[RMDB]
RNA sequence: GGGAACGACUCGAGUAGAGUCGAAAACACCCAGGCCGACACCGCACCGGGCACCGUCACGGAGUUCCAGCCGAGCACGGGAACGGCGUUGCCGCCGAAGUACUCUGGCGUCCACGCCGAGGGUGAGCCUAUUGGUUGGAUUCGUCCAACCAAUAGGAAAAGAAACAACAACAACAAC
Reactivity to DMS in 0.01 (KOAc 150mM, MgCl2 10mM, bicine 150mM(pH8.5), 24C), signal-to-noise 6, nucleotides 027 to 126: c180a150c000c000c010a180g010g010c020c030g010a120c070a060c050c040g020c070a130c060c030g000g000g000c050a120c020c020g020u010c050a250c050g010g000a090g010u010u010c110c070a130g000c030c010g000a110g020c090a030c040g000g000g000a090a280c020g010g000c010g010u000u000g020c170c000g010c020c000g010a050a140g000u010a130c140u000c030u010g020g000c000g010u000c030c060a050c030g000c000c000g010a060g010g010g010u000g010a140g010
Reactivity to 2A3 in 0.01 (KOAc 150mM, MgCl2 10mM, bicine 150mM(pH8.5), 24C), signal-to-noise 4, nucleotides 027 to 126: c060a030c010c000c000a020g030g060c010c020g060a050c020a020c050c020g060c010a040c030c020g000g020g030c050a050c050c020g040u040c010a020c090g040g000a050g040u260u060c060c020a040g010c020c010g020a030g040c080a010c020g010g010g020a060a010c020g000g000c000g020u010u020g040c040c000g000c000c000g010a080a010g110u140a130c080u050c110u210g010g010c000g000u000c010c010a020c020g000c010c010g010a030g040g030g000u030g030a020g060
Conditions: 150 mM KOAc, 10 mM MgCl2 and 150 mM bicine (pH 8.5), 24 C. This 177-nucleotide RNA was probed chemically with DMS and 2A3. The DMS profile rests on 7,640 reads. In probing experiments dimethyl sulfate is read out at A N1 and C N3, which are open when not base-paired. DMS adducts were read by reverse transcription with MarathonRT.